[RMDB]
RNA sequence: GGGAACGACUCGAGUAGAGUCGAAAACAUCAUAUUUAUGCAGCAUCCUCAGUAGCACGUCACCGUGGGGAUUCAUUUGUAUGUGCGCUGCCCUGUAUGAAACCACUAAAUGCUGUAGAAAACAGUGUCCACCUAUGAUCUUCGGAUCAUAGGUGGAAAAAGAAACAACAACAACAAC
Reactivity to 2A3 in 0.01 (KOAc 150mM, MgCl2 10mM, bicine 150mM(pH8.5), 24C), signal-to-noise 2, nucleotides 027 to 126: c010a040u090c040a020u010a090u090u110u130a160u200g020c000a000g000c020a030u000c000c000u000c010a050g010u090a010g020c040a100c110g090u030c040a030c100c030g070u050g030g020g000g090a070u040u040c040a020u000u140u220g180u090a090u030g080u070g040c040g040c020u030g010c050c000c010u020g000u020a040u060g050a030a070a040c000c030a010c050u090a040a070a050u100g010c000u000g040u040a060g200a150a080a010a010c000a000g030u040g090
Reactivity to DMS in 0.01 (KOAc 150mM, MgCl2 10mM, bicine 150mM(pH8.5), 24C), signal-to-noise 2, nucleotides 027 to 126: c210a130u000c050a040u000a070u000u000u020a080u010g010c050a090g020c010a160u000c060c000u020c010a050g000u010a040g000c080a060c070g010u000c080a060c090c150g040u000g030g000g010g000a040u000u000c040a080u010u010u000g000u000a030u000g020u000g000c140g000c010u000g000c050c120c120u000g000u000a030u000g000a020a090a220c070c040a110c170u000a030a110a100u000g000c000u000g000u000a140g010a040a070a060a070c030a010g010u000g000